[RMDB]
RNA sequence: GGGAACGACUCGAGUAGAGUCGAAAAGAUAUGGACGUCAUCCAGACAUGCUCUGGGAUCGGAAACGAUCCCUGAGCAACAGCUGGGCGUCCUAAGUCAAAACAAUUUCUCCUUCGGGAGAAAUUGACAAUAAGAGUGUCUUCGGACACUCUUAUUGAAAAGAAACAACAACAACAAC
Reactivity to 2A3 in 0.01 (KOAc 150mM, MgCl2 10mM, bicine 150mM(pH8.5), 24C), signal-to-noise 4, nucleotides 027 to 126: g010a010u020a010u060g000g010a000c000g020u080c070a270u130c060c000a000g040a040c120a270u300g000c000u020c010u010g000g000g000a000u000c010g010g000a010a000a020c000g010a010u000c000c000c000u000g000a010g000c010a010a010c010a010g000c000u010g000g020g020c010g010u000c000c000u010a020a000g000u000c010a000a080a110a160c010a020a010u010u010u030c000u010c000c010u060u160c300g170g000g000a000g010a000a010a000u010u000g010a050
Reactivity to DMS in 0.01 (KOAc 150mM, MgCl2 10mM, bicine 150mM(pH8.5), 24C), signal-to-noise 7, nucleotides 027 to 126: g010a020u000a080u010g000g000a020c000g010u000c220a200u010c130c010a010g010a040c050a300u010g010c000u000c000u010g000g000g010a010u000c000g020g000a030a030a040c010g000a010u000c000c000c000u000g000a010g010c000a060a040c160a140g000c010u000g000g010g000c000g010u000c000c000u000a000a080g000u010c010a130a110a140a300c020a000a010u000u000u000c000u000c000c000u000u020c230g020g020g000a010g010a000a000a000u000u000g000a190

Structure probing data (2A3 and DMS) for a 177-nucleotide construct.
The RNA was probed in 150 mM KOAc, 10 mM MgCl2 and 150 mM bicine (pH 8.5) at 24 C.
The data come from the RNA Mapping Database (RMDB), library TTRDES.